[RMDB]
RNA sequence: GGGAACGACUCGAGUAGAGUCGAAAACUGCAGGUCAACGGGGCCUCUUCAGAUCAGCUAUUGCAGAAGAAAGGUCAGCCAAGCGCUCUGGGCCGGCUCGACUGUAUAUAGGAGCUUCUGAUUUCAACCAGAAGCUAACUCUCUCCGAAACAAUGAGAUUUAAUGGGUAUUUCGAUACCCAUUAAAUAAAAGAAACAACAACAACAAC
Reactivity to DMS in 0.01 (KOAc 150mM, MgCl2 10mM, bicine 150mM(pH8.5), 24C), signal-to-noise 1, nucleotides 027 to 156: c080u000g010c070a030g050g010u010c010a120a050c100g050g030g020g010c020c030u000c050u000u000c010a080g020a140u010c020a090g040c040u000a060u000u010g000c040a090g010a100a220g010a050a100a070g020g020u000c020a050g000c020c000a020a080g000c150g050c070u010c040u000g020g020g050c020c010g020g020c040u010c010g010a120c010u000g020u010a090u000a110u010a080g050g010a130g020c010u000u000c000u010g030a020u010u000u010c120a090a030c030c000a020g000a020a010g040c010u000a000a040c030u000c020u000c010u000c010c000g000a200a060a100c020a040a130u010g010a120g010
Reactivity to 2A3 in 0.01 (KOAc 150mM, MgCl2 10mM, bicine 150mM(pH8.5), 24C), signal-to-noise 2, nucleotides 027 to 156: c030u010g000c020a000g020g030u020c020a080a000c060g040g010g020g050c030c020u020c020u090u070c040a070g040a300u070c040a030g080c020u090a050u200u190g000c030a000g000a090a010g020a060a080a010g000g020u010c000a020g000c000c010a180a030g040c060g040c070u010c060u150g090g090g000c020c030g040g000c040u030c040g020a010c020u000g030u030a050u020a030u030a190g060g060a010g010c020u000u000c020u030g090a200u130u230u300c050a070a070c020c000a000g000a010a000g010c000u000a010a010c010u030c010u010c000u030c030c030g100a080a080a060c050a040a120u110g030a050g010